[RMDB]
RNA sequence: GGGAACGACUCGAGUAGAGUCGAAAAUGCACGUUGACGUAGACCCCCAAAGUCCGUUUGUGCUACAACUGCAGAAGAGUUUCCCACAAUUCGAGAUUGUGGCUCAGCAGGUCACUCCGAAUGACCACGUUUUGCAUGGAUUCGUCCAUGCAAAACGAAAAGAAACAACAACAACAAC
Reactivity to DMS in 0.01 (KOAc 150mM, MgCl2 10mM, bicine 150mM(pH8.5), 24C), signal-to-noise 3, nucleotides 027 to 126: u020g010c020a040c090g020u010u000g020a100c110g020u010a160g000a150c000c000c020c070c110a090a110a230g000u040c050c030g030u000u030u010g020u020g000c020u000a090c070a020a050c020u020g000c070a040g010a100a060g010a150g000u000u000u000c030c020c010a170c200a060a010u000u020c010g010a130g030a100u010u020g010u000g010g010c010u010c050a130g000c200a110g010g000u000c010a020c020u000c020c010g000a040a020u000g000a050c220c080a120
Reactivity to 2A3 in 0.01 (KOAc 150mM, MgCl2 10mM, bicine 150mM(pH8.5), 24C), signal-to-noise 4, nucleotides 027 to 126: u100g000c010a000c050g040u050u180g020a020c030g030u020a050g040a050c000c020c020c030c010a020a060a010g010u020c010c000g010u030u080u130g060u020g020c000u060a030c030a110a000c020u050g050c030a010g030a180a020g040a070g010u000u050u060c010c010c000a020c040a020a050u030u040c040g020a020g010a280u060u130g010u020g000g000c000u010c070a130g060c080a050g080g000u010c000a000c040u010c020c000g030a040a020u050g030a040c040c030a040

This 177-nucleotide RNA was probed chemically with DMS and 2A3. The data come from the RNA Mapping Database (RMDB), libraries RFM100 and RFMREP. Conditions: 150 mM KOAc, 10 mM MgCl2 and 150 mM bicine (pH 8.5), 24 C.